Chemical mapping of a 177-nucleotide RNA with DMS. Values cover nucleotides 27 to 126. DMS adducts were read by reverse transcription with MarathonRT. Source: RMDB library OK2TRN, as collected in RNAgym. Conditions: 150 mM KOAc, 10 mM MgCl2 and 150 mM bicine (pH 8.5), 24 C.
RNA sequence: GGGAACGACUCGAGUAGAGUCGAAAAUUGUUUGUGGGUGUCUUAGAGGGCAUGCCUGUUAUGCAGGUAAUUUCAUCUAUUAAAACAGGGGUUGGUAAUACGCUUGGGGAACUGGCACUGAUUAUCGUCCCUCCCUCUAAUUCGUUAGAGGGAGGGAAAAAGAAACAACAACAACAAC
Reactivity to DMS in 0.01 (KOAc 150mM, MgCl2 10mM, bicine 150mM(pH8.5), 24C), signal-to-noise 2, nucleotides 027 to 126: u000u010g030u000u000u000g070u000g000g000g010u010g040u000c090u000u000a070g010a130g020g000g010c090a080u010g010c010c000u010g010u010u000a090u030g010c060a020g010g010u000a020a100u000u000u000c040a040u000c050u000a100u010u010a060a050a120a080c100a070g020g010g010g020u000u020g000g010u000a100a100u000a060c220g020c100u010u020g000g000g030g010a050a090c070u020g000g000c050a050c100u000g000a140u000u000a080u010c110g000